The record gives the reactivity of an RNA of 177 nucleotides to DMS and 2A3. Conditions: 150 mM KOAc, 10 mM MgCl2 and 150 mM bicine (pH 8.5), 24 C. The 2A3 profile rests on 790 reads.
RNA sequence: GGGAACGACUCGAGUAGAGUCGAAAAACGCCUAGGGGAAAGUCCCCGGAUCUCGGGUAGAAAGUGCCGUGCGCUACUAUGGCGUGCAAUAAUCCCGCCCUGCUGUCCAUAUCAACCCGCCAAGAAGUGUCGGAAGUAGAUUCGUCUACUUCCGACAAAAAGAAACAACAACAACAAC
Reactivity to DMS in 0.01 (KOAc 150mM, MgCl2 10mM, bicine 150mM(pH8.5), 24C), signal-to-noise 1, nucleotides 027 to 126: a060c090g000c010c000u000a130g010g020g030g000a080a100a110g030u040c020c020c000c050g000g010a070u050c070u000c030g000g030g010u000a020g020a070a120a070g010u000g040c020c050g000u000g000c070g000c000u010a040c110u040a050u070g000g000c060g000u040g000c100a110a040u010a130a100u010c050c020c040g000c070c000c000u000g010c020u050g010u010c010c080a140u040a120u020c100a020a060c070c040c020g030c050c080a070a100g000a120a070g060
Reactivity to 2A3 in 0.01 (KOAc 150mM, MgCl2 10mM, bicine 150mM(pH8.5), 24C), signal-to-noise 2, nucleotides 027 to 126: a030c030g070c000c070u080a030g030g000g000g010a230a140a000g160u220c000c000c000c000g000g000a020u050c040u030c020g030g000g000u060a030g100a060a160a000g060u110g080c040c000g060u060g010c050g000c000u140a130c030u100a120u180g040g000c000g050u030g000c020a010a110u050a080a030u000c050c000c000g010c000c000c000u040g000c000u050g000u000c000c000a030u020a000u120c000a020a100c000c000c000g060c040c010a090a000g110a050a020g120